[RMDB]
RNA sequence: GGGAACGACUCGAGUAGAGUCGAAAAUUUGGGUGCCCUGCCAUGCCUGUCAUCCAGAAGUUCUUUCUGGCACUGACUCGUGGGGCUUUGCGUUCGCAACGCAUGCUCUGUGGAGUGACGAGGGGAGGUGAAAACAUACGUUCGCGUAUGUUUUCACAAAAGAAACAACAACAACAAC
Reactivity to DMS in 0.01 (KOAc 150mM, MgCl2 10mM, bicine 150mM(pH8.5), 24C), signal-to-noise 1, nucleotides 027 to 126: u000u000u000g030g000g010u000g000c030c020c010u010g010c010c000a040u010g000c030c040u000g010u000c020a050u000c010c000a020g020a010a040g020u000u000c120u000u000u000c020u000g000g000c060a070c040u000g010a030c000u000c110g050u010g010g010g010g020c010u000u000u000g000c030g000u010u010c300g030c180a150a070c020g000c010a010u000g000c000u000c010u000g010u010g020g020a100g010u010g010a060c090g000a080g020g010g010g000a100g000
Reactivity to 2A3 in 0.01 (KOAc 150mM, MgCl2 10mM, bicine 150mM(pH8.5), 24C), signal-to-noise 1, nucleotides 027 to 126: u110u030u060g060g000g010u110g010c020c000c000u000g020c000c000a040u050g030c000c040u010g010u040c000a150u300c020c000a020g000a040a010g050u280u200c010u070u070u020c000u030g000g000c000a030c020u010g040a000c000u010c050g020u030g020g010g000g030c000u050u070u020g030c000g010u010u080c110g000c140a060a010c020g010c020a000u010g000c000u000c010u020g040u030g090g000a040g040u010g070a040c050g010a070g000g020g030g020a050g080